RNA sequence: GGGAACGACUCGAGUAGAGUCGAAAAAGAGCGUUGCAUGCGCGUCGAAGGGCGAUGGCGACUGACCCUGGAGCACAUGCAAGUGAGUAUGCAGACAUGAGUAACGUUAAGCCGGGUGAAAUCCCCGAUAUCUUCCGAAGUUCGCUUCGGAAGAUAUAAAAGAAACAACAACAACAAC
Reactivity to 2A3 in 0.01 (KOAc 150mM, MgCl2 10mM, bicine 150mM(pH8.5), 24C), signal-to-noise 7, nucleotides 027 to 126: a000g110a020g030c080g030u020u020g000c000a000u010g000c030g000c020g210u280c020g060a080a030g000g000g010c020g030a030u050g040g020c060g040a070c040u040g030a050c000c000c000u010g030g000a000g000c000a000c000a030u020g000c000a010a010g020u040g010a040g030u130a040u120g020c060a020g060a100c010a070u120g040a050g090u080a100a010c080g020u030u050a110a040g040c050c010g000g010g010u020g010a010a030a050u040c020c000c010c000g000
Reactivity to DMS in 0.01 (KOAc 150mM, MgCl2 10mM, bicine 150mM(pH8.5), 24C), signal-to-noise 7, nucleotides 027 to 126: a040g000a120g010c040g000u000u000g000c000a010u000g000c030g010c010g010u020c150g010a250a160g020g000g010c010g000a130u010g000g000c250g000a170c030u010g000a300c300c000c010u000g000g010a070g000c000a030c010a010u010g000c000a010a030g000u010g000a110g010u010a040u000g000c040a050g000a060c090a060u000g010a100g010u000a060a060c090g010u010u010a060a120g010c160c010g000g000g010u000g000a020a050a120u010c090c000c000c030g000